[RMDB]
RNA sequence: GGGAACGACUCGAGUAGAGUCGAAAACCAACGGUUUCGACCGUUGGAAAAAAGCGUACUACUAGUGUACGAUAAGCUACCCACCGAGCUCCCAAAUAGGAGCUCGAGGCUUUUGACGUACCUAGUAUCGCAAAAAACCCUAUGUUCGCAUAGGGAACAUGAUUAGCUCGUUCGCGAGCUAAUCAUGAAAAGAAACAACAACAACAAC
Reactivity to 2A3 in 0.01 (KOAc 150mM, MgCl2 10mM, bicine 150mM(pH8.5), 24C), signal-to-noise 1, nucleotides 027 to 156: c000c000a000a000c000g000g040u060u110u080c230g190a040c020c000g010u000u010g000g130a130a040a000a000a000a000g030c010g000u040a070c010u020a000c000u010a020g020u010g000u300a010c000g010a070u040a090a020g070c020u040a100c030c080c060a020c040c040g010a000g000c010u010c010c010c050a210a300a080u300a220g000g000a000g000c000u000c000g000a010g010g000c000u150u060u100u100g100a110c050g010u010a000c020c000u000a000g000u000a000u060c020g000c000a030a000a000a100a100a100c000c000c000u030a000u000g010u000u020c220g020c140a000u000a000g000g010g010a000a010